RNA sequence: GGGAACGACUCGAGUAGAGUCGAAAACCGUAGGGCAUGGAACUACCUCAUAAAGGUAGCGUUGAAAUAGCGUUCGAAAGAGCGCUAUGGAGCUACUACAAAGAGGCCAUGCCCUAAACGGAAAAUCACCGUGAUUCGUUCGCGAAUCACGGUGAAAUCAUUUAUGGGUGUUCGCACCCAUAAAUGAAAAAGAAACAACAACAACAAC
Reactivity to DMS in 0.01 (KOAc 150mM, MgCl2 10mM, bicine 150mM(pH8.5), 24C), signal-to-noise 1, nucleotides 027 to 156: c000c010g020u000a030g000g040g000c010a000u010g000g020a130a160c070u000a300c010c000u000c050a080u010a140a190a240g010g010u000a020g000c000g050u010u060g030a300a160a050u000a000g000c000g120u020u000c010g000a190a170a250g010a040g000c000g040c010u000a000u000g000g010a270g040c000u000a020c020u000a070c050a060a170a220g000a010g020g040c020c000a020u000g000c040c000c000u000a000a000a020c030g020g040a060a030a120a130u000c000a020c030c000g000u000g000a060u000u000c000g040u000u040c300g010c040g040a020a000u000c020a000c000g010g040u000g000a000a010a070
Background: This 207-nucleotide RNA was probed chemically with DMS. Source: RMDB library RNAMAK, as collected in RNAgym. The RNA was probed in 150 mM KOAc, 10 mM MgCl2 and 150 mM bicine (pH 8.5) at 24 C.